An RNA of 177 nucleotides, treated with DMS and 2A3 and read out base by base. For DMS the reverse transcriptase was MarathonRT. For DMS, 8,505 sequencing reads were counted. It was measured as part of the RMDB library TTRDES. 2A3 adducts were read by reverse transcription with SuperScript II with manganese.
[RMDB]
RNA sequence: GGGAACGACUCGAGUAGAGUCGAAAAGAUAUGGAUCCGAACAGCUAGCGUUUAUGUCGGAAACGACAUGAACGCUUGGACCUGUCGGAUCCUAAGUCAAACUUGGGGGUGUUCGCACCCCCAAGAACAUAGCGGAAAAGUUCGCUUUUCCGCUAUGAAAAGAAACAACAACAACAAC
Reactivity to DMS in 0.01 (KOAc 150mM, MgCl2 10mM, bicine 150mM(pH8.5), 24C), signal-to-noise 6, nucleotides 027 to 126: g000a020u000a190u010g000g000a010u000c000c000g020a080a070c010a010g020c040u000a010g030c000g020u000u000u000a000u000g010u010c000g000g010a070a050a120c000g010a000c000a010u000g010a010a010c000g030c010u000u000g020g000a080c300c000u000g010u000c000g010g010a000u010c000c000u000a010a080g010u000c020a140a100a260c010u000u000g000g010g000g020g020u000g020u000u020c300g010c010a010c010c010c000c000c000a000a000g010a100a180
Reactivity to 2A3 in 0.01 (KOAc 150mM, MgCl2 10mM, bicine 150mM(pH8.5), 24C), signal-to-noise 1, nucleotides 027 to 126: g000a000u030a000u070g000g000a000u020c010c000g050a140a050c020a000g080c030u170a030g020c030g000u010u000u000a010u000g030u010c010g010g030a060a010a040c000g010a010c000a000u020g010a000a000c000g040c010u000u050g010g010a020c010c020u020g020u000c000g000g000a000u000c000c000u000a010a000g000u020c050a030a120a290c020u010u000g010g020g020g020g020u010g020u060u080c160g070c110a000c000c010c010c010c000a000a000g000a020a000